[RMDB]
RNA sequence: GGGAACGACUCGAGUAGAGUCGAAAACAUCACGAGCUUCGCGGCGGUCGCCGAGUAGCUCACGCGCGCGAACAGCGCAUGCAGCGCGUUCGCAUCGAAGUCGUGGCGCGCGACCAUGUCGGCGAUACUUUUACGCUAUGUUCGCAUAGCGUAAAAGAAAAGAAACAACAACAACAAC
Reactivity to 2A3 in 0.01 (KOAc 150mM, MgCl2 10mM, bicine 150mM(pH8.5), 24C), signal-to-noise 8, nucleotides 027 to 126: c030a080u190c080a020c180g070a030g060c060u060u040c020g010c020g040g000c020g050g050u050c030g000c030c010g040a040g080u120a030g020c040u060c030a000c000g020c000g010c000g000c000g010a030a010c050a150g030c010g010c040a010u250g100c080a050g010c000g000c010g000u020u040c020g000c020a030u120c080g120a110a020g100u140c030g010u030g030g010c020g000c010g000c000g020a010c020c000a090u230g040u020c030g100g020c010g010a010u040a060
Reactivity to DMS in 0.01 (KOAc 150mM, MgCl2 10mM, bicine 150mM(pH8.5), 24C), signal-to-noise 7, nucleotides 027 to 126: c080a120u020c140a120c130g010a090g020c100u000u000c040g040c030g010g010c030g010g010u000c050g020c020c070g000a060g020u000a060g010c110u000c010a030c020g020c020g010c140g000c000g010a020a010c010a160g040c010g020c010a060u010g020c240a160g020c010g020c020g000u000u000c010g030c020a060u000c090g000a080a080g000u010c020g040u000g000g010c020g010c060g010c010g010a020c040c020a060u010g020u010c010g020g020c010g010a050u000a090